[RMDB]
Structure probing data (DMS and 2A3) for a 207-nucleotide construct. The RNA was probed in 150 mM KOAc, 10 mM MgCl2 and 150 mM bicine (pH 8.5) at 24 C. 2A3 adducts were read by reverse transcription with SuperScript II with manganese. It was measured as part of the RMDB library M2RFPK. The 2A3 profile rests on 2,629 reads.

RNA sequence: GGGAACGACUCGAGUAGAGUCGAAAAUAACACUGGCGGCUGCGUAUCACUUUAGGGUACGUGAUAGUGCGAUAUAAGAAGCACUGGUACAUGCCGGCAGGGACAGUUAAGAGAUGGCCGCAGUCUCAAAAGGGGUCAUUCUUCGGAAUGACCCCAAGAUAUAAGUAACCUUCGGGUUACUUAUAUCAAAAGAAACAACAACAACAAC
Reactivity to DMS in 0.01 (KOAc 150mM, MgCl2 10mM, bicine 150mM(pH8.5), 24C), signal-to-noise 3, nucleotides 027 to 156: u000a070a090c060a060c020u000g010g020c000g010g040c020u000g000c020g000u030a020u000c000a120c170u000u000u020a160g010g030g030u000a010c010g010u000g010a150u000a020g030u000g010c010g010a150u000a160u020a150a140g010a190a220g010c000a010c010u000g000g010u010a090c100a080u010g010c010c010g010g010c050a050g010g020g000a060c060a120g020u000u000a130a190g010a050g010a050u000g020g010c040c070g010c100a300g000u000c010u000c020a050a050a120a200g000g010g040g020u000c010a010u000u000c020u010u000c300g030g020a020a010u000g000a050c000c000c000c000a000a010
Reactivity to 2A3 in 0.01 (KOAc 150mM, MgCl2 10mM, bicine 150mM(pH8.5), 24C), signal-to-noise 3, nucleotides 027 to 156: u050a030a010c020a010c040u040g150g000c000g000g020c010u040g000c010g000u010a000u010c010a070c230u170u160u270a220g060g010g020u010a000c000g000u010g060a070u100a090g010u010g000c020g010a010u060a020u070a290a100g130a090a020g010c000a000c000u000g010g030u130a110c050a050u190g000c010c000g030g000c010a010g000g020g020a020c050a070g000u020u050a090a000g010a000g000a010u030g070g020c020c010g090c070a010g000u000c000u000c000a050a110a000a010g010g000g000g000u000c000a000u000u000c000u020u040c140g100g000a000a000u010g000a000c010c010c000c000a000a000